[RMDB]
RNA sequence: GGGAACGACUCGAGUAGAGUCGAAAACUGAUGAGCAGGAUCGUGCGAACAAGGCGUAUUGUUGGAAGCAUGAUAUCCGACAUGCGGGUGAAUUCUACUCAUACAGUGAUGUCGGUGAACGCGUGGGCGAAGGACGUCAAUUCGUUGACGUCCUUCGAAAAGAAACAACAACAACAAC
Reactivity to 2A3 in 0.01 (KOAc 150mM, MgCl2 10mM, bicine 150mM(pH8.5), 24C), signal-to-noise 3, nucleotides 027 to 126: c030u040g030a030u070g010a060g020c040a040g000g030a000u050c010g080u100g100c030g040a100a030c070a030a040g160g000c040g040u090a050u070u220g030u050u000g020g020a080a020g050c040a040u090g050a040u120a080u110c000c010g010a000c000a010u030g000c000g000g120g030u080g020a040a010u070u000c010u050a060c000u000c020a030u090a190c000a020g030u090g090a060u090g030u030c040g050g000u050g020a080a020c050g010c040g030u070g070g000g000
Reactivity to DMS in 0.01 (KOAc 150mM, MgCl2 10mM, bicine 150mM(pH8.5), 24C), signal-to-noise 4, nucleotides 027 to 126: c010u000g000a070u010g000a060g010c040a040g020g000a020u010c030g030u000g010c050g000a080a090c090a090a100g010g020c060g000u000a060u010u000g000u000u000g010g010a060a130g000c150a130u000g030a090u020a070u000c010c000g020a050c030a010u000g010c000g020g010g020u000g010a060a070u000u010c060u000a080c040u000c000a060u000a100c050a030g020u000g000a070u000g010u010c050g000g000u000g010a110a080c130g010c060g030u010g000g010g030